[RMDB]
RNA sequence: GGGAACGACUCGAGUAGAGUCGAAAAAUCAUCACUAUUGCCGUCAAUGCUUUGAGAAUGAAAAUCGAACUCCAGGAUGCGCGGCAUGCCAAACGAUCAUCCAACCGGAGCUGUGUCAACAUGAUCACCGUCAUUUACGUUUCGACGUAAAUGACGGAAAAGAAACAACAACAACAAC
Reactivity to 2A3 in 0.01 (KOAc 150mM, MgCl2 10mM, bicine 150mM(pH8.5), 24C), signal-to-noise 1, nucleotides 027 to 126: a000u050c020a010u070c040a010c020u080a020u140u120g020c020c000g110u070c010a020a080u100g100c000u030u000u130g060a100g090a160a130u250g050a170a070a000a150u180c080g020a080a050c030u070c040c010a010g000g030a000u010g120c080g010c010g000g000c020a010u050g030c020c030a060a110a000c100g020a040u030c010a000u020c030c040a000a030c040c060g010g010a010g010c010u100g050u040g000u040c010a010a040c020a140u080g040a020u070c010a010
Reactivity to DMS in 0.01 (KOAc 150mM, MgCl2 10mM, bicine 150mM(pH8.5), 24C), signal-to-noise 2, nucleotides 027 to 126: a050u000c020a050u000c070a080c120u010a060u010u000g000c020c130g030u000c030a070a150u000g000c050u000u030u030g000a070g000a110a100u010g000a040a040a110a100u020c120g010a060a170c020u000c060c050a070g000g020a010u000g010c180g000c040g000g040c030a060u010g030c090c130a020a080a140c130g000a020u000c090a030u000c040c040a080a050c150c080g000g030a010g010c030u000g000u000g000u000c060a070a030c170a080u010g000a060u000c070a220